Source information: Source: RMDB library OK2TST, as collected in RNAgym. Chemical mapping of a 177-nucleotide RNA with 2A3 and DMS. DMS (dimethyl sulfate) methylates the pairing face of unpaired adenines and cytosines. The RNA was probed in 150 mM KOAc, 10 mM MgCl2 and 150 mM bicine (pH 8.5) at 24 C.
RNA sequence: GGGAACGACUCGAGUAGAGUCGAAAAGGGAAUUCUACAUGGCAAGUGUUUCCCCCUCUAUUGGGCACGUGGAAGCUCAGGUCUUUGGUUUUAGGUGUCAUGACGGCUUCCAUAGCACUUUGCUGGAAAUCAGAUUAUCGUUCGCGAUAAUCUGAUUAAAAGAAACAACAACAACAAC
Reactivity to 2A3 in 0.01 (KOAc 150mM, MgCl2 10mM, bicine 150mM(pH8.5), 24C), signal-to-noise 5, nucleotides 027 to 126: g040g010g050a030a090u110u030c030u090a100c040a130u130g030g000c020a040a010g010u020g020u020u050u060c020c010c000c000c000u040c040u090a210u100u180g020g020g010c080a030c140g010u010g000g000a010a010g000c020u040c100a060g020g170u010c000u090u120u120g100g080u090u140u050u180a100g060g040u080g030u100c020a010u050g010a030c060g000g000c000u000u000c000c000a010u000a000g000c000a010c010u070u100u100g010c010u020g020g050a030
Reactivity to DMS in 0.01 (KOAc 150mM, MgCl2 10mM, bicine 150mM(pH8.5), 24C), signal-to-noise 7, nucleotides 027 to 126: g000g000g000a090a080u000u000c040u000a080c100a130u000g010g010c040a040a050g010u000g000u000u000u000c040c050c010c030c020u010c210u010a130u010u010g010g010g020c100a080c150g020u000g000g010a030a010g020c010u010c300a090g020g010u000c010u000u010u010g020g010u010u010u010u010a110g020g010u000g000u010c030a030u010g000a050c060g000g000c010u000u000c000c000a020u000a070g010c010a030c030u000u000u000g010c030u000g000g010a150